[RMDB]
RNA sequence: GGGAACGACUCGAGUAGAGUCGAAAACAGCGGCUCCGCCUCAGGGAUGUCCACAUCGUUGCUGCUCACGUCAUCCCUCCGGGUCAGAACAGGUUGGUCAGGGUCGGGGUCAGAGCGGAGGCGAAGGCGCCCAGGGCGUCCGCGCCGGACACGACCAAGAGUCACUAGUAUUCGUACUAGUGACUCUAAAAGAAACAACAACAACAAC
Reactivity to DMS in 0.01 (KOAc 150mM, MgCl2 10mM, bicine 150mM(pH8.5), 24C), signal-to-noise 1, nucleotides 027 to 156: c060a260g010c010g010g040c090u040c020c040g010c010c020u010c060a200g050g000g010a050u000g010u000c030c030a050c060a190u000c010g030u000u010g000c040u010g060c000u000c050a170c100g000u010c030a080u000c000c000c000u040c000c000g000g050g040u020c000a100g000a110a300c100a250g010g050u010u000g000g000u000c010a080g020g030g030u000c050g040g000g000g020u000c060a050g020a040g030c000g020g000a090g010g020c010g000a080a120g000g000c020g040c030c000c000a080g010g050g010c040g000u010c040c020g000c010g000c030c040g000g000a160c050a070c000g010a180c010c030a150
Reactivity to 2A3 in 0.01 (KOAc 150mM, MgCl2 10mM, bicine 150mM(pH8.5), 24C), signal-to-noise 2, nucleotides 027 to 156: c040a010g010c000g020g010c030u000c020c000g040c000c020u070c060a170g050g030g050a140u060g130u120c020c000a080c030a180u090c010g020u010u050g020c010u010g000c000u030c000a170c080g140u110c040a070u040c000c000c000u000c000c010g030g000g020u020c010a000g040a160a160c070a100g100g140u110u010g000g020u020c040a050g010g050g070u260c110g000g000g010g010u030c050a010g000a010g000c000g000g010a040g010g000c010g000a010a020g020g000c010g000c000c000c000a020g010g010g010c010g090u130c000c010g000c000g000c000c020g000g030a070c030a030c140g050a030c000c100a010